[RMDB]
RNA sequence: GGGAACGACUCGAGUAGAGUCGAAAAUUACCCCGGUAAGCUCUACUUUCAGGGGAAAGGCGGCUCCGAAUUAACUCGUACGCUUGAUGAUCUAGAACGAGAACUGCAAACAACAAAAGUCGAUGCUGUAAUUAUUGAUCCGUUUUACGGUCUGUCCGAAGAUGACGUUGUUCGCAACGUCAUCUUCAAAAGAAACAACAACAACAAC
Reactivity to 2A3 in 0.01 (KOAc 150mM, MgCl2 10mM, bicine 150mM(pH8.5), 24C), signal-to-noise 1, nucleotides 027 to 156: u090u050a080c010c000c000c000g050g020u040a030a030g070c010u030c040u150a140c010u050u000u270c070a030g030g030g000g000a000a000a010g000g000c010g010g030c020u080c080c000g060a100a030u190u110a100a070c000u010c090g030u110a100c160g030c000u030u070g050a040u070g010a040u160c060u090a010g010a100a000c000g030a040g020a140a000c010u010g010c000a160a140a020c040a030a030c010a090a240a030a010g010u050c060g030a040u030g000c000u000g040u100a140a130u120u170a110u060u200g060a040u050c000c020g000u000u040u050u230a110c070g000g000u020c020u020g100u040c040c040
About this RNA
Structure probing data (2A3) for a 207-nucleotide construct. Values cover nucleotides 27 to 156. 2A3 adducts were read by reverse transcription with SuperScript II with manganese. The data come from the RNA Mapping Database (RMDB), library OK3TST.